[RMDB]
RNA sequence: GGGAACGACUCGAGUAGAGUCGAAAACAGCAUCGAAAAUGGACGGACUUUCCCGAUGGAUCGUUUCGUAUAAUUUUGGUGCAAAAUAGUAGAGAGACGCAGUGUUACUCUUCCUUACGUUACCUGUUCCUCCAUCACAUUUCGAUGUGAUGGAGGAAAAAGAAACAACAACAACAAC
Reactivity to 2A3 in 0.01 (KOAc 150mM, MgCl2 10mM, bicine 150mM(pH8.5), 24C), signal-to-noise 3, nucleotides 027 to 126: c060a040g000c000a000u000c030g140a030a000a000a020u070g060g020a000c000g000g000a000c000u000u000u000c000c000c030g120a300u300g000g030a010u000c010g000u000u060u030c000g000u000a040u030a130a090u030u030u010u000g020g010u000g000c020a000a150a000a000u100a070g090u040a010g010a000g000a010g000a020c030g030c200a170g010u060g080u130u150a120c010u010c000u020u030c030c020u050u090a050c100g020u000u050a030c000c020u020g010u010
An RNA of 177 nucleotides, treated with 2A3 and read out base by base. 2A3 adducts were read by reverse transcription with SuperScript II with manganese. Values cover nucleotides 27 to 126. It was measured as part of the RMDB libraries RFM100 and RFMREP.